[RMDB]
RNA sequence: GGGAACGACUCGAGUAGAGUCGAAAAGUCUCCCGAUUCGUCGGGAGACCGAGAAAUUCAGGUGAUUUGCUACCUUUUAGUGCAGCUAGAAAUUCAAAGGAAACACCAUGGCGUUCGCGCCAUGGAACGUUAGUAUGCGGUUCGCCGCAUACUAACGAAAAGAAACAACAACAACAAC
Reactivity to 2A3 in 0.01 (KOAc 150mM, MgCl2 10mM, bicine 150mM(pH8.5), 24C), signal-to-noise 3, nucleotides 027 to 126: g010u000c000u000c000c020c010g010a010u030u050c160g040u000c000g050g000g000a020g000a000c000c000g010a010g100a060a150a040u220u130c080a010g070g000u020g060a230u040u050u130g040c020u030a060c020c000u070u130u100u070a010g000u030g020c020a020g000c020u080a050g120a060a110a090u140u080c050a110a080a060g070g030a100a070a020c050a030c010c000a010u000g010g000c040g000u040u040c250g010c000g000c020c000a000u000g000g000a010a000
Reactivity to DMS in 0.01 (KOAc 150mM, MgCl2 10mM, bicine 150mM(pH8.5), 24C), signal-to-noise 3, nucleotides 027 to 126: g000u000c000u000c000c000c000g020a030u000u020c170g000u000c010g010g010g010a000g010a000c000c020g000a090g000a290a060a080u000u000c070a050g010g010u000g000a100u000u000u000g030c040u000a040c020c020u000u000u000u000a040g030u000g000c030a030g020c080u000a090g010a050a070a050u000u000c040a040a080a100g000g000a060a060a050c140a120c010c000a000u000g010g010c000g030u000u010c180g010c020g000c000c000a030u010g000g000a010a040